Structure probing data (DMS and 2A3) for a 207-nucleotide construct. For 2A3 the reverse transcriptase was SuperScript II with manganese. Reactivities are given for positions 27 through 156. Reactivities are rounded to 0.1 and cut off at 0 and 3.
RNA sequence: GGGAACGACUCGAGUAGAGUCGAAAAACAAUUCGAAGGUAUCCAUCACCAGGAUGAAAAUGAAGGUGGACAGGCUGUCUCCCAUAUAGGCGAUGUCUCGUGUCCGCUGGUUGAGAUUCAAACCCUCCUCUUUGCGGUAGCUGAUCUUCAUCCAGCAACAAGGAGACAUAUUCGUAUGUCUCCUUGUAAAAGAAACAACAACAACAAC
Reactivity to DMS in 0.01 (KOAc 150mM, MgCl2 10mM, bicine 150mM(pH8.5), 24C), signal-to-noise 4, nucleotides 027 to 156: a070c040a080a140u010u010c090g050a110a100g030g030u000a060u000c030c030a080u000c030a100c050c030a070g020g000a090u010g000a080a070a050a130u010g020a090a070g030g040u000g030g000a050c070a050g010g000c030u000g010u010c030u000c020c010c020a170u010a120u010a080g030g010c060g010a110u000g020u000c030u000c070g030u000g000u000c030c030g010c020u010g010g040u000u000g000a050g000a090u000u000c110a080a110a070c070c010c020u010c050c050u000c100u010u000u010g010c050g040g000u010a090g010c090u010g000a050u010c030u000u000c020a050u010c020c010a090g010c000a210
Reactivity to 2A3 in 0.01 (KOAc 150mM, MgCl2 10mM, bicine 150mM(pH8.5), 24C), signal-to-noise 5, nucleotides 027 to 156: a000c050a020a090u140u120c080g100a080a020g040g000u070a040u050c030c010a050u050c040a030c040c020a010g060g060a060u110g070a040a050a020a100u130g050a100a040g030g030u050g010g020a020c020a040g040g000c020u060g020u070c020u040c030c040c020a040u110a030u090a180g050g000c050g040a080u070g020u010c020u020c080g070u070g090u060c020c060g000c010u000g020g010u010u010g010a010g000a030u070u140c060a070a070a080c020c000c000u060c040c020u120c100u090u160u150g090c090g020g040u040a050g030c050u030g010a010u000c020u080u010c050a020u010c000c000a000g030c000a000